[RMDB]
RNA sequence: GGGAACGACUCGAGUAGAGUCGAAAAAUAGGGUUAGACUUUGUCGAACAAGGGCUUUAACUAGCUUGAGGACCCCCACCUUCCAGGUGGCCCUGUCAUUUACUCAGGGAACGCACCUUGCAUGUGGACUGUUGAGUUGUUUCGACAACUCAACAGUAAAAGAAACAACAACAACAAC
Reactivity to DMS in 0.01 (KOAc 150mM, MgCl2 10mM, bicine 150mM(pH8.5), 24C), signal-to-noise 2, nucleotides 027 to 126: a080u000a040g010g000g010u000u000a200g000a030c010u000u000u000g000u000c020g000a020a080c020a040a300g020g000g000c010u000u010u010a120a190c180u010a000g030c010u000u000g000a300g010g000a020c010c010c020c000c010a010c010c010u000u010c120c160a160g010g060u000g010g000c000c010c000u000g000u000c040a020u000u010u010a030c020u000c010a000g000g010g000a120a090c160g000c050a080c050c020u020u000g020c080a100u000g030u000g010g020
Reactivity to 2A3 in 0.01 (KOAc 150mM, MgCl2 10mM, bicine 150mM(pH8.5), 24C), signal-to-noise 1, nucleotides 027 to 126: a000u060a000g000g000g000u000u000a010g000a010c030u190u050u260g010u020c000g000a010a010c010a010a010g030g000g020c020u030u100u010a080a110c240u070a120g020c020u020u000g020a040g000g000a000c010c000c020c000c010a010c000c020u030u040c030c030a040g000g000u000g000g000c010c000c010u000g020u000c020a050u110u300u060a030c040u010c000a000g010g000g060a020a010c090g000c030a060c000c100u000u060g050c060a060u020g020u060g120g070